[RMDB]
RNA sequence: GGGAACGACUCGAGUAGAGUCGAAAAGAUAUGGAGCGUCUACCGUUCGAAGAACGUACAUCGGAAACGAUGUACGGGAGAACGUAGCGCUCCUAAGUCAAAAUCGUGUAAGUUCGCUUACACGAAACUCAUUAAUGUGCUUCGGCACAUUAAUGAGAAAAGAAACAACAACAACAAC
Reactivity to DMS in 0.01 (KOAc 150mM, MgCl2 10mM, bicine 150mM(pH8.5), 24C), signal-to-noise 3, nucleotides 027 to 126: g000a050u000a300u010g010g000a010g000c010g010u010c160u010a040c300c140g020u000u000c000g020a140a230g010a210a170c010g010u020a000c000a020u000c000g010g010a080a070a160c010g020a020u000g000u000a000c000g000g000g000a040g020a010a020c010g020u000a060g000c010g010c000u010c000c000u000a000a080g000u000c040a080a080a110a150u000c000g010u000g000u000a000a010g000u000u020c300g040c010u000u000a000c000a010c000g010a020a030a200
Reactivity to 2A3 in 0.01 (KOAc 150mM, MgCl2 10mM, bicine 150mM(pH8.5), 24C), signal-to-noise 3, nucleotides 027 to 126: g010a000u030a030u090g000g000a010g000c000g080u060c090u110a140c250c110g030u030u000c080g190a300a050g000a040a010c000g000u000a010c000a010u000c000g000g010a020a020a000c000g000a000u000g000u010a000c000g000g000g000a040g000a000a000c020g040u050a010g010c000g000c010u000c000c000u000a010a020g000u010c000a010a000a010a300u070c020g000u000g010u000a010a020g020u010u220c300g020c190u000u020a000c010a010c000g000a050a000a000